[RMDB]
RNA sequence: GGGAACGACUCGAGUAGAGUCGAAAAAAAGCACUGGGAUUACAGGCAUGAGCCACUGUGCCUGGCUGGGCAAGAUUUUGGAUGGGGACCCCCCACCAGCUGUCAUUUAAUUGCAUGUAUUGAUAAAGAUAAGCUUGUUAUUCGUAACAAGCUUAUCAAAAGAAACAACAACAACAAC
Reactivity to 2A3 in 0.01 (KOAc 150mM, MgCl2 10mM, bicine 150mM(pH8.5), 24C), signal-to-noise 2, nucleotides 027 to 126: a000a000a000g080c020a040c060u000g020g020g050a100u100u240a070c000a000g000g000c000a000u050g000a010g000c040c020a050c050u120g000u030g070c010c000u010g040g000c030u010g000g010g040c010a070a100g010a100u110u200u070u150g090g030a090u020g030g000g050g100a110c030c040c000c040c040c010a010c000c020a010g010c030u020g010u030c000a010u000u130u130a100a020u100u040g020c020a020u100g040u150a110u070u050g050a050u090a140a040a090
Reactivity to DMS in 0.01 (KOAc 150mM, MgCl2 10mM, bicine 150mM(pH8.5), 24C), signal-to-noise 4, nucleotides 027 to 126: a020a050a090g000c050a100c040u000g000g000g000a130u010u010a120c030a020g010g000c030a030u000g000a110g010c040c030a050c050u000g010u000g010c030c010u010g010g000c120u010g000g010g010c050a100a080g000a110u010u010u000u010g010g010a110u000g000g000g010g010a230c070c060c020c020c000c010a060c100c040a050g010c070u000g000u010c040a050u000u000u010a060a110u010u000g000c040a020u000g010u000a060u010u010g000a080u020a060a100a090